[RMDB]
Structure probing data (2A3) for a 177-nucleotide construct.
It was measured as part of the RMDB library OK1LIB.

RNA sequence: GGGAACGACUCGAGUAGAGUCGAAAACACAACAAAACAAAAACAAAGCUUAUUGCAAAAUAGCACUCACUGAAGCAGGUCGCGCAAUAAGCAAUCUCUUGAGUGUUCAAAACAAAACAAAACAAAACAUGACGAUCGAGUUCGCUCGAUCGUCAUGAAAAGAAACAACAACAACAAC
Reactivity to 2A3 in 0.01 (KOAc 150mM, MgCl2 10mM, bicine 150mM(pH8.5), 24C), signal-to-noise 1, nucleotides 027 to 126: c120a000c190a060a060c040a000a040a000a000c150a030a040a040a020a000c120a040a030a040g000c000u000u000a000u050u060g000c020a060a000a000a170u080a070g020c040a020c050u070c000a090c080u230g010a170a060g110c090a000g000g300u050c080g050c000g000c080a000a000u000a010a010g000c000a040a000u020c000u000c000u030u040g040a000g050u040g000u010u030c000a020a020a050a060c050a050a050a000a020c060a070a300a000a000c010a000a100a000a000